[RMDB]
RNA sequence: GGGAACGACUCGAGUAGAGUCGAAAAACGACACUGAACAAACGGUAUGCCGGGCAAGCGAUCCCAAUGCACCCGUAGAUUCGCCUCAAUACGUAGACAUAUCCGACUUGAGUACGGGACAAACAAUUACUUGUAUUGAACCCUAUAAUAUGGGUGAACGAUUUGGGUCAUUCGUGACCCAAAUCGUAAAAGAAACAACAACAACAAC
Reactivity to 2A3 in 0.01 (KOAc 150mM, MgCl2 10mM, bicine 150mM(pH8.5), 24C), signal-to-noise 1, nucleotides 027 to 156: a000c110g000a040c100a040c030u150g060a210a010c050a070a070a020c050g030g030u060a000u100g060c020c000g000g000g000c040a100a000g000c000g020a100u000c020c030c000a020a020u090g020c000a010c010c010c000g000u040a020g020a140u080u170c000g050c070c000u010c020a020a020u060a070c050g000u000a020g140a050c050a110u100a020u070c040c000g050a060c010u040u030g030a000g030u080a110c040g000g050g030a020c070a000a080a000c000a010a010u140u060a030c020u170u140g070u040a050u070u010g050a060a040c000c000c000u000a000u030a270a000u250a110u210g000g000g030u010g000a020
Chemical mapping of a 207-nucleotide RNA with 2A3. Values cover nucleotides 27 to 156. The RNA was probed in 150 mM KOAc, 10 mM MgCl2 and 150 mM bicine (pH 8.5) at 24 C. 2A3 is a SHAPE reagent: it acylates the 2'-hydroxyl of flexible nucleotides of all four kinds.